RNA sequence: GGGAACGACUCGAGUAGAGUCGAAAAGCGUACUACGGAGAGGUUUACGCUAGCCAAUUCAGGUAUAGUCCCAAAUAGGACUAUACGCAGAUUGGCUUGGACCGUAAACUACCCACCUCCGUAUCGCAAAACUCUUCCUACUUCGGUAGGAAGAGAAGACACUCGAAAACUUCGGUUUUCGAGUGUCAAAAGAAACAACAACAACAAC
Reactivity to 2A3 in 0.01 (KOAc 150mM, MgCl2 10mM, bicine 150mM(pH8.5), 24C), signal-to-noise 1, nucleotides 027 to 156: g000c010g020u110a040c040u000a000c010g000g000a000g000a010g010g000u000u000u000a020c000g030c000u000a020g000c020c000a000a000u070u120c020a210g000g060u020a000u000a000g000u000c010c020c020a200a270a080u300a050g020g000a010c000u000a000u000a000c000g050c020a000g000a000u000u000g010g000c030u000u010g000g050a000c020c020g000u000a010a000a010c030u090a090c060c040c010a050c010c010u000c000c000g020u000a040u280c000g000c030a000a040a090a110c010u000c000u000u020c020c000u000a000c010u040u050c190g120g000u000a000g000g020a000a000g000a000g030a000a020
The record gives the reactivity of an RNA of 207 nucleotides to 2A3. 2A3 adducts were read by reverse transcription with SuperScript II with manganese. The 2A3 profile rests on 993 reads.